[RMDB]
RNA sequence: GGGAACGACUCGAGUAGAGUCGAAAAGGGUGAGACCUAGGAACCGUAGGGGUAUUCUCAAAGGAAGCUUUUGCAGUGACGCCCAUGUAAGUGGGAUAUAAUAACAGAACUCGUAUGAGUAGCCUAAUAAAUCGGACCUUCUUCGGAAGGUCCGAAACUUCAGAUUUAUCUUCGGAUAAAUCUGAAGAAAAGAAACAACAACAACAAC
Reactivity to 2A3 in 0.01 (KOAc 150mM, MgCl2 10mM, bicine 150mM(pH8.5), 24C), signal-to-noise 1, nucleotides 027 to 156: g040g010g010u060g030a040g030a090c040c030u110a100g000g090a000a100c000c010g060u030a050g000g060g000g000u010a080u050u030c020u030c030a090a100a010g060g000a000a070g060c080u030u110u170u070g040c100a030g000u010g040a010c050g070c000c000c050a010u080g070u100a060a100g020u020g000g010g040a010u040a000u050a040a180u060a090a000c020a010g110a070a010c040u020c070g070u130a110u230g010a020g030u010a010g100c000c030u050a100a060u060a180a180a080u020c010g000g000a000c010c000u000u010c000u030u000c040g010g020a020a020g000g000u030c000c010g000a000a000a000
Source information: This 207-nucleotide RNA was probed chemically with 2A3. Reactivities are rounded to 0.1 and cut off at 0 and 3. 2A3 adducts were read by reverse transcription with SuperScript II with manganese.